Description:
An RNA of 177 nucleotides, treated with DMS and 2A3 and read out base by base. The reactions ran in a buffer of 150 mM KOAc, 10 mM MgCl2 and 150 mM bicine (pH 8.5), at 24 C.
RNA sequence: GGGAACGACUCGAGUAGAGUCGAAAAGAUAUGGAGGAUCCCAUGUGCUGAUGACCUCGGAAACGAGCAAGGCAUGCAUGGGAGUCCUCCUAAGUCAAACGGAGGCACGGUUCGCCGUGCCUCCGAAGCUUAACUAACGGUUCGCCGUUAGUUAAGCAAAAGAAACAACAACAACAAC
Reactivity to DMS in 0.01 (KOAc 150mM, MgCl2 10mM, bicine 150mM(pH8.5), 24C), signal-to-noise 3, nucleotides 027 to 126: g000a030u000a300u020g010g010a010g020g000a300u000c000c000c000a010u000g020u000g020c050u010g000a090u020g000a170c300c010u000c010g020g010a140a140a160c020g000a030g000c020a070a150g000g010c010a050u000g000c020a000u010g020g020g000a040g010u010c000c000u000c010c000u010a020a060g010u000c040a090a130a170c060g020g000a010g000g020c000a010c000g000g020u000u000c300g010c000c000g040u000g000c000c000u000c000c000g000a000a090
Reactivity to 2A3 in 0.01 (KOAc 150mM, MgCl2 10mM, bicine 150mM(pH8.5), 24C), signal-to-noise 2, nucleotides 027 to 126: g030a020u070a010u140g000g000a000g020g010a010u010c050c000c000a010u040g040u060g040c040u030g030a300u120g050a100c000c040u010c020g000g020a080a040a010c020g010a000g010c030a090a100g040g020c050a020u300g070c010a000u010g000g010g000a020g040u010c010c010u000c010c000u010a000a000g000u000c020a050a060a090c030g020g000a020g030g010c010a000c070g030g100u070u230c300g100c100c000g000u000g050c000c000u000c000c000g000a000a000
Values cover nucleotides 27 to 126.